This 207-nucleotide RNA was probed chemically with 2A3 and DMS. The RNA was probed in 150 mM KOAc, 10 mM MgCl2 and 150 mM bicine (pH 8.5) at 24 C. 2A3 adducts were read by reverse transcription with SuperScript II with manganese.
RNA sequence: GGGAACGACUCGAGUAGAGUCGAAAAAUUGCGUGUCCAUCCUGCUGAGCCAAGAACAGCUGAGAAAAUCCUCAGUGUGCUUUAGUCAGUUCAUUGAAAGACCUACAAUGAAGCUCCUGGAGGCAUUUUAUUUGAUUUGUCCAUCUCAGGGUUUACAGUACUGACUGAUAUUCGUAUCAGUCAGUACAAAAGAAACAACAACAACAAC
Reactivity to 2A3 in 0.01 (KOAc 150mM, MgCl2 10mM, bicine 150mM(pH8.5), 24C), signal-to-noise 4, nucleotides 027 to 156: a010u080u100g020c050g020u050g040u000c020c020a050u020c020c000u030g030c020u030g020a020g030c040c030a090a050g030a070a050c030a020g070c000u020g010a020g040a040a230a040a080u100c010c000u000c000a000g010u020g020u050g090c040u040u060u080a030g030u070c030a030g010u040u060c020a030u040u100g060a120a100a040g060a070c010c040u050a030c040a040a070u090g020a080a030g020c030u020c090c020u040g030g000a040g010g000c000a000u010u030u030u110a170u090u140u210g050a040u030u020u070g020u000c020c010a130u010c090u020c050a030g030g030g010u090u120u110a070c040a010
Reactivity to DMS in 0.01 (KOAc 150mM, MgCl2 10mM, bicine 150mM(pH8.5), 24C), signal-to-noise 2, nucleotides 027 to 156: a100u000u010g010c020g040u010g010u000c040c020a120u000c030c010u020g030c020u000g000a120g000c030c050a060a110g020a030a050c010a090g040c000u020g020a070g000a100a090a130a140u010c100c020u010c000a020g010u000g030u000g020c040u020u000u010a080g010u000c050a050g000u000u000c030a080u000u000g010a080a120a110g000a080c020c020u000a050c020a030a070u000g010a060a100g020c040u000c010c020u010g040g010a150g020g010c030a030u000u000u010u000a050u000u010u010g010a090u000u000u000g000u010c030c020a100u000c060u000c060a070g010g020g000u010u000u000a050c100a180